An RNA of 177 nucleotides, treated with DMS and 2A3 and read out base by base.
For DMS, 1,832 sequencing reads were counted.
The data come from the RNA Mapping Database (RMDB), library TTRDEL.
Reactivities are given for positions 27 through 126.
Conditions: 150 mM KOAc, 10 mM MgCl2 and 150 mM bicine (pH 8.5), 24 C.

[RMDB]
RNA sequence: GGGAACGACUCGAGUAGAGUCGAAAAGAUAUGGAUCUACACAUCAGCAACAGCUCGGAAACGAGACAUGCUGUGUGAGAUCCUAAGUCAAAAUCCCAUUGUCACUGUUCGCAGUGACAAUGGGAAACGACAACACUUUGUUCGCAAAGUGUUGUCGAAAAGAAACAACAACAACAAC
Reactivity to DMS in 0.01 (KOAc 150mM, MgCl2 10mM, bicine 150mM(pH8.5), 24C), signal-to-noise 2, nucleotides 027 to 126: g020a030u010a300u000g000g000a000u000c000u000a130c010a010c000a010u020c020a000g020c000a020a100c210a160g000c000u000c000g010g010a020a100a190c000g010a000g010a040c110a200u000g020c000u000g020u000g040u000g010a090g010a020u000c010c000u010a030a080g010u000c020a040a060a100a100u000c000c000c000a020u000u000g000u000c000a000c000u000g020u010u000c170g030c000a010g010u000g030a000c010a000a000u000g010g000g000a000a010a030
Reactivity to 2A3 in 0.01 (KOAc 150mM, MgCl2 10mM, bicine 150mM(pH8.5), 24C), signal-to-noise 3, nucleotides 027 to 126: g050a010u070a020u180g010g000a010u010c010u300a210c040a000c000a010u300c030a070g010c010a020a160c030a200g040c010u010c010g050g000a080a110a100c010g000a000g050a030c020a080u070g000c010u000g010u000g010u000g000a010g020a000u000c000c000u010a090a010g040u000c040a000a000a000a300u010c000c000c020a000u010u010g010u000c000a010c010u020g100u060u120c300g060c200a000g000u000g000a000c000a000a000u010g000g000g000a030a000a000